[RMDB]
Conditions: 150 mM KOAc, 10 mM MgCl2 and 150 mM bicine (pH 8.5), 24 C. This 177-nucleotide RNA was probed chemically with 2A3 and DMS. The DMS profile rests on 1,888 reads. The data come from the RNA Mapping Database (RMDB), library RFM100.
RNA sequence: GGGAACGACUCGAGUAGAGUCGAAAACUAAAUUAUAACUUAAAUCCUCAUUCCGCUCAACUCUUCGAUUGUAGACGACUAUCAAUAAACUGGGUGCUGUAAGCUUCCGAGUAGCGUUCAGUUACGAUUGCUAUCAACAGUUCGCUGUUGAUAGCAAAAAAGAAACAACAACAACAAC
Reactivity to 2A3 in 0.01 (KOAc 150mM, MgCl2 10mM, bicine 150mM(pH8.5), 24C), signal-to-noise 2, nucleotides 027 to 126: c010u030a030a100a090u230u120a170u050a220a000c020u070u130a030a030a030u020c000c010u020c020a050u040u000c000c010g020c010u030c030a000a050c000u010c000u020u010c060g030a020u060u280g080u060a000g040a000c010g030a030c060u050a050u050c060a120a110u080a190a020a000c000u000g000g000g000u030g020c010u010g020u090a070a060g030c020u160u000c050c060g020a010g060u060a000g010c000g010u060u000c020a060g000u020u020a020c050g050a040
Reactivity to DMS in 0.01 (KOAc 150mM, MgCl2 10mM, bicine 150mM(pH8.5), 24C), signal-to-noise 1, nucleotides 027 to 126: c010u000a040a000a040u030u010a150u070a100a100c100u070u010a020a040a140u050c010c010u000c000a070u000u000c030c020g030c010u000c030a050a050c030u000c030u020u000c010g000a120u020u070g000u020a040g000a070c040g010a070c110u000a030u030c080a050a030u020a080a040a040c030u000g000g000g050u000g020c020u000g000u010a060a160g000c110u050u020c010c050g020a160g000u050a060g020c010g010u000u010c060a020g000u000u030a020c040g000a060